RNA sequence: GGGAACGACUCGAGUAGAGUCGAAAACAGGCACACACCAUGUAUGGCAUUGAGGUAUGGUACUGGGACGCUUCGGAACGAAGUCGCGACCUCCUUGCAUCAGCACAACACAAAGCCAGUCGCAUCACGGCCCGCUAAAUUUCGAUUUAGCGGGCCGAAAAGAAACAACAACAACAAC
Reactivity to 2A3 in 0.01 (KOAc 150mM, MgCl2 10mM, bicine 150mM(pH8.5), 24C), signal-to-noise 1, nucleotides 027 to 126: c000a000g020g060c000a040c000a000c000a000c060c000a040u080g000u120a070u050g000g000c030a040u000u110g040a070g010g000u100a160u110g050g000u040a100c070u060g010g000g000a020c030g000c150u100u020c030g100g150a040a140c110g000a040a000g040u110c000g000c000g090a000c010c000u000c000c000u090u040g030c020a000u090c030a100g000c010a000c070a100a070c010a040c000a170a040a000g020c000c000a030g100u100c010g000c040a040u120c020a000

Structure probing data (2A3) for a 177-nucleotide construct.
2A3 adducts were read by reverse transcription with SuperScript II with manganese.
For 2A3, 588 sequencing reads were counted.
The reactions ran in a buffer of 150 mM KOAc, 10 mM MgCl2 and 150 mM bicine (pH 8.5), at 24 C.
Values cover nucleotides 27 to 126.